[RMDB]
RNA sequence: GGGAACGACUCGAGUAGAGUCGAAAAGAUAUGGACCUAUCAGCUAGUGUACACUACCCACCUCGGAAACGAGAGGUGUACACAAGCUGUAAGGGUCCUAAGUCAAACACAGCGUUCGCGCUGUGAACCCAGAUAGUUAGUUCGCUAACUAUCUGGGAAAAGAAACAACAACAACAAC
Reactivity to DMS in 0.01 (KOAc 150mM, MgCl2 10mM, bicine 150mM(pH8.5), 24C), signal-to-noise 7, nucleotides 027 to 126: g010a040u000a300u010g000g010a000c000c000u000a300u000c010a000g010c010u000a120g030u000g010u000a000c000a010c010u010a090c080c050c120a300c130c000u010c010g000g000a120a090a190c010g000a010g000a100g010g000u000g000u000a010c000a000c000a050a010g010c000u000g010u000a030a190g000g010g000u000c000c000u000a010a080g000u000c050a060a090a220c000a010c000a010g010c000g020u000u010c200g030c000g020c000u000g000u000g000a060a110
Reactivity to 2A3 in 0.01 (KOAc 150mM, MgCl2 10mM, bicine 150mM(pH8.5), 24C), signal-to-noise 7, nucleotides 027 to 126: g040a030u090a060u180g000g000a000c000c010u060a140u210c010a000g000c010u080a070g000u000g000u020a010c010a010c010u140a140c040c080c040a060c030c000u010c000g030g040a120a080a060c010g000a000g010a010g010g010u010g000u000a000c000a000c000a000a010g000c000u010g010u050a070a190g050g000g000u000c000c000u000a080a020g030u010c040a080a080a060c010a000c000a010g010c000g080u160u170c240g030c010g000c160u000g000u010g000a000a010
The record gives the reactivity of an RNA of 177 nucleotides to DMS and 2A3. Values cover nucleotides 27 to 126. For 2A3 the reverse transcriptase was SuperScript II with manganese. The RNA was probed in 150 mM KOAc, 10 mM MgCl2 and 150 mM bicine (pH 8.5) at 24 C.